[RMDB]
RNA sequence: GGGAACGACUCGAGUAGAGUCGAAAAAAUGUGCCUUGUAUGGAAAUUAAUUUAGCAGCUAAUUUGUGGAAAAGCUUUUUGUACUCAAAUGUUGCCCUAUAUUUACCUGACGAGUAUAAGCAAUCUCCACCAAAUAUUCCUAUUCCAGUAGACAAAGGACUUAUUGGACGUUCGCGUCCAAUAAGUCAAAAGAAACAACAACAACAAC
Reactivity to 2A3 in 0.01 (KOAc 150mM, MgCl2 10mM, bicine 150mM(pH8.5), 24C), signal-to-noise 1, nucleotides 027 to 156: a000a000u110g000u100g000c010c000u050u050g040u030a060u060g020g000a020a020a090u120u100a010a120u120u090u050a070g030c050a000g010c020u080a100a080u090u080u100g010u010g020g000a020a040a040a050g000c030u010u020u070u290u110g010u030a000c010u010c050a020a090a120u060g030u040u060g000c020c000c000u040a030u010a020u250u110u060a060c030c050u020g040a040c030g000a000g070u000a020u040a230a000g000c000a010a010u030c010u010c030c000a010c020c000a000a000a020u050a030u050u060c020c000u010a040u020u000c000c000a000g000u000a020g050a050c060a040a050a050g230